[RMDB]
Chemical mapping of a 177-nucleotide RNA with 2A3 and DMS. The reactions ran in a buffer of 150 mM KOAc, 10 mM MgCl2 and 150 mM bicine (pH 8.5), at 24 C. For DMS, 5,420 sequencing reads were counted. The 2A3 profile rests on 6,570 reads. 2A3 adducts were read by reverse transcription with SuperScript II with manganese. It was measured as part of the RMDB library OK2TRN.
RNA sequence: GGGAACGACUCGAGUAGAGUCGAAAAUGCUCCUUAAUUGGGCUUCAUCUGCAAGUAAUACUAAUAGGCCUGUGGCCCAGUAUAAGGCCAGUGCAAUCACAUCCUUAAGUCAAAUGGAUAGAAUGAAGGUUAGGUAAUAGUUCGCUAUUACCUAACCAAAAGAAACAACAACAACAAC
Reactivity to 2A3 in 0.01 (KOAc 150mM, MgCl2 10mM, bicine 150mM(pH8.5), 24C), signal-to-noise 6, nucleotides 027 to 126: u040g020c020u070c040c000u040u040a040a020u070u030g000g000g000c000u050u020c010a070u000c040u090g010c030a020a070g060u120a110a180u080a290c050u090a040a170u060a150g050g050c020c050u070g020u050g020g000c010c000c000a000g010u040a080u000a300a020g010g000c020c030a040g030u030g070c010a040a080u070c020a030c010a130u000c000c000u070u110a120a060g150u150c040a090a090a120u110g040g010a030u030a120g150a100a100u180g050a150a040
Reactivity to DMS in 0.01 (KOAc 150mM, MgCl2 10mM, bicine 150mM(pH8.5), 24C), signal-to-noise 6, nucleotides 027 to 126: u010g010c040u000c000c020u020u000a060a060u000u000g020g010g000c010u000u000c040a050u010c110u000g010c130a090a080g020u000a110a110u010a300c100u010a060a110u010a130g000g020c050c150u000g000u010g010g010c000c010c040a030g010u000a090u000a060a040g000g010c300c060a060g010u010g010c090a070a050u000c070a070c110a060u000c010c000u000u000a070a130g010u000c130a030a070a070u000g000g000a060u000a050g010a100a070u010g000a140a120